[RMDB]
RNA sequence: GGGAACGACUCGAGUAGAGUCGAAAAUACGGCAUUUGUAUAGCUGAUUUGCCCGGCACUGAUUCGUGCCUUCACUUCCGCUGGAACAUCACCAAGCGACAGGUGCAUUUGCACGUCAGACACUGAGCGACCUACCUUCUUAGCGAUUUCCUCGUUAGCGUGUAUACGAAUUCGUUCGUAUACACGCAAAAGAAACAACAACAACAAC
Reactivity to 2A3 in 0.01 (KOAc 150mM, MgCl2 10mM, bicine 150mM(pH8.5), 24C), signal-to-noise 8, nucleotides 027 to 156: u190a020c030g010g010c040a080u080u070u190g140u170a170u150a150g010c040u050g030a110u030u030u140g050c020c030c000g020g020c040a030c030u080g050a170u230u200c050g000u010g000c000c000u030u070c010a030c010u030u020c030c010g000c010u030g010g040a170a040c030a200u110c000a030c040c010a120a050g010c000g050a030c030a050g030g040u010g020c060a110u040u070u230g010c040a040c030g020u030c020a020g030a060c020a020c140u090g020a020g070c010g020a020c000c000u030a040c010c040u070u060c010u050u080a010g010c010g180a190u040u020u040c010c020u050c040g090u060u090a020
Reactivity to DMS in 0.01 (KOAc 150mM, MgCl2 10mM, bicine 150mM(pH8.5), 24C), signal-to-noise 2, nucleotides 027 to 156: u000a060c030g040g030c000a100u000u000u000g040u010a100u000a120g010c030u000g000a140u000u000u000g000c010c020c080g010g030c050a130c040u000g010a120u010u000c120g040u020g010c030c070u000u000c030a030c040u010u000c050c030g000c030u010g000g030a090a090c100a190u020c130a100c020c010a030a110g040c020g010a100c050a040g020g030u010g010c080a240u000u000u000g010c040a030c020g020u000c010a060g000a120c070a030c010u000g010a060g010c000g000a030c030c020u000a080c030c020u000u000c030u000u010a050g010c050g010a300u000u010u010c010c010u000c020g020u000u000a190